[RMDB]
RNA sequence: GGGAACGACUCGAGUAGAGUCGAAAAAUCAUGCUUACAAUUUCUCGACCUGUAUAAUAUUUGACACCAUUAGGACCUACGAAGCCCCAUUUUGAAGUAUCGGGAAGUUGCUUUACGCCCGACAACAACAACAUUAAGUGGUAAUGAUCGACGUAAAGUCCAACAUUAAAUUCGUUUAAUGUUGGACAAAAGAAACAACAACAACAAC
Reactivity to 2A3 in 0.01 (KOAc 150mM, MgCl2 10mM, bicine 150mM(pH8.5), 24C), signal-to-noise 5, nucleotides 027 to 156: a000u110c070a050u090g060c020u120u090a060c020a040a150u030u050u040c050u010c000g060a060c020c020u060g090u090a110u050a170a110u110a200u110u110u130g050a030c030a000c040c020a040u050u070a060g000g030a050c010c020u050a040c100g060a080a030g040c000c010c010c040a060u080u090u020u120g110a080a010g030u060a030u060c000g000g020g000a020a040g050u070u040g040c030u030u070u060a040c030g020c030c030c020g040a000c000a050a010c000a020a000c000a000a010c010a060u090u100a160a050g040u040g100g000u050a050a030u070g040a050u030c030g030a030c040g010u050a010a030a070
Reactivity to DMS in 0.01 (KOAc 150mM, MgCl2 10mM, bicine 150mM(pH8.5), 24C), signal-to-noise 3, nucleotides 027 to 156: a110u000c050a170u020g010c060u000u050a130c060a060a100u010u010u000c020u000c020g000a090c030c010u000g020u010a080u000a070a100u000a120u010u010u010g010a100c050a110c030c020a110u020u000a070g020g000a050c000c020u000a120c090g000a130a140g000c020c010c030c040a130u010u000u010u010g000a040a120g010u000a040u000c030g030g000g010a090a140g010u000u010g010c040u000u000u000a040c030g010c020c000c030g060a050c060a030a060c030a140a060c010a050a060c030a120u010u010a060a200g040u000g000g030u000a060a120u010g010a090u000c020g010a030c030g030u000a050a080a160